[RMDB]
RNA sequence: GGGAACGACUCGAGUAGAGUCGAAAAUCUUACCCAAGAAGGGUGGGGAAAGCUCUGCCACAUUUCUGCGACUGAGCGUCUCAGCACCCAGCCAGGGAGUGUGACUAAGUCACAUGUAAGGUUGGUCGACUUGAUGCUUAUUCGUAAGCAUCAAGUCAAAAGAAACAACAACAACAAC
Reactivity to DMS in 0.01 (KOAc 150mM, MgCl2 10mM, bicine 150mM(pH8.5), 24C), signal-to-noise 5, nucleotides 027 to 126: u010c050u000u000a270c020c010c030a100a120g010a220a130g000g000g040u000g010g010g000g000a030a060a200g010c020u010c020u000g020c010c010a020c030a080u010u010u000c200u010g050c060g000a040c020u010g010a010g020c030g010u000c040u000c010a120g010c110a050c060c010c000a050g000c140c110a150g000g010g020a230g020u000g010u000g020a030c010u000a120a140g000u000c010a020c010a000u000g010u000a080a060g020g010u000u000g010g010u010c100
Reactivity to 2A3 in 0.01 (KOAc 150mM, MgCl2 10mM, bicine 150mM(pH8.5), 24C), signal-to-noise 3, nucleotides 027 to 126: u010c000u020u060a070c000c010c010a010a020g200a070a040g000g020g000u020g000g020g000g020a020a080a060g030c010u020c020u040g050c040c000a100c030a110u140u220u100c100u080g060c040g100a160c060u010g000a000g040c040g030u020c000u000c030a070g130c020a020c000c000c020a010g020c000c010a040g020g090g030a110g010u010g000u010g000a020c020u190a270a090g040u020c000a010c000a010u060g120u080a070a040g020g040u050u050g030g030u060c060